[RMDB]
An RNA of 177 nucleotides, treated with DMS and 2A3 and read out base by base. For DMS, 628 sequencing reads were counted. Source: RMDB library OK2TRN, as collected in RNAgym. DMS adducts were read by reverse transcription with MarathonRT.
RNA sequence: GGGAACGACUCGAGUAGAGUCGAAAAGUCUAGCGAUUUAGGGAUCCGAUCCGGGUGGCAGAACUCAACUGCAUGAGUAGACACGCAAGUCGCGUAUUGGCCGACCGACCAAGGAUCUGCUAGACGAAGCCUGACGUGGAUUCGUCCACGUCAGGCUAAAAGAAACAACAACAACAAC
Reactivity to DMS in 0.01 (KOAc 150mM, MgCl2 10mM, bicine 150mM(pH8.5), 24C), signal-to-noise 1, nucleotides 027 to 126: g010u000c000u000a020g020c000g020a280u000u000u040a110g020g020g010a000u020c030c000g000a170u020c140c030g020g000g010u000g000g030c010a210g020a090a080c000u000c030a020a070c070u010g030c300a140u000g000a070g020u000a070g000a180c100a030c020g000c000a050a140g000u000c200g000c070g000u000a140u000u020g000g030c010c010g000a080c010c040g030a070c140c050a110a110g010g000a020u000c000u000g000c010u000a010g020a020c020g000a100
Reactivity to 2A3 in 0.01 (KOAc 150mM, MgCl2 10mM, bicine 150mM(pH8.5), 24C), signal-to-noise 1, nucleotides 027 to 126: g000u000c020u000a020g000c040g080a080u000u140u240a180g100g000g000a010u030c000c030g000a060u010c010c030g010g030g040u120g030g000c030a060g030a100a000c000u000c010a060a160c130u300g100c120a100u020g020a000g020u060a030g080a020c060a000c030g010c090a180a230g250u220c040g000c000g020u030a070u100u130g060g000c000c000g000a060c000c020g030a050c000c060a110a050g030g000a000u000c040u010g000c020u030a010g000a010c000g020a010